[RMDB]
RNA sequence: GGGAACGACUCGAGUAGAGUCGAAAAGAGCGAUUGGUGAUAUGCAUUAUCAGCAGAUUGCUGAGUCUCCCACCGAUGAGCCAACAAUGAAAGAGUGGGCGGAUGAUAUUGAAGCUACAGCACGGAGCAGUUCUGAUGGAUUUGUUGAGCUCAGUGACCUGUACAAACAUUUCGAUGUUUGUACAGGAAAAGAAACAACAACAACAAC
Reactivity to 2A3 in 0.01 (KOAc 150mM, MgCl2 10mM, bicine 150mM(pH8.5), 24C), signal-to-noise 5, nucleotides 027 to 156: g100a000g000c010g010a020u000u050g070g060u010g060a020u030a030u130g220c180a150u130u090a020u080c020a010g100c000a020g110a300u080u060g000c010u010g000a020g050u010c030u010c040c010c000a010c020c040g080a100u080g000a000g000c010c000a000a000c000a020a030u050g030a040a030a020g030a020g040u090g000g050g000c020g010g040a050u060g060a020u080a080u230u170g030a070a020g010c010u060a100c040a030g050c070a030c090g070g030a040g020c050a040g020u080u040c020u020g050a080u030g000g060a010u020u020u000g000u000u000g000a040g020c000u000c010a000g010u000g030a050
Reactivity to DMS in 0.01 (KOAc 150mM, MgCl2 10mM, bicine 150mM(pH8.5), 24C), signal-to-noise 4, nucleotides 027 to 156: g000a080g010c030g020a050u010u000g000g040u000g000a040u010a040u000g030c090a210u010u000a040u000c070a090g010c000a090g000a080u010u010g000c010u000g000a150g010u000c050u010c020c000c020a130c020c040g020a110u000g010a050g000c020c010a060a070c040a050a050u000g020a300a120a070g010a120g030u000g010g010g010c040g010g020a130u000g010a160u000a130u000u010g020a230a160g020c030u000a070c060a090g000c080a110c080g000g000a110g020c070a110g010u010u000c040u020g010a170u000g020g000a190u000u000u010g010u010u010g010a150g010c010u000c010a080g020u000g010a170
Overview
This 207-nucleotide RNA was probed chemically with 2A3 and DMS. Values cover nucleotides 27 to 156. For 2A3 the reverse transcriptase was SuperScript II with manganese. The DMS profile rests on 7,444 reads. The RNA was probed in 150 mM KOAc, 10 mM MgCl2 and 150 mM bicine (pH 8.5) at 24 C.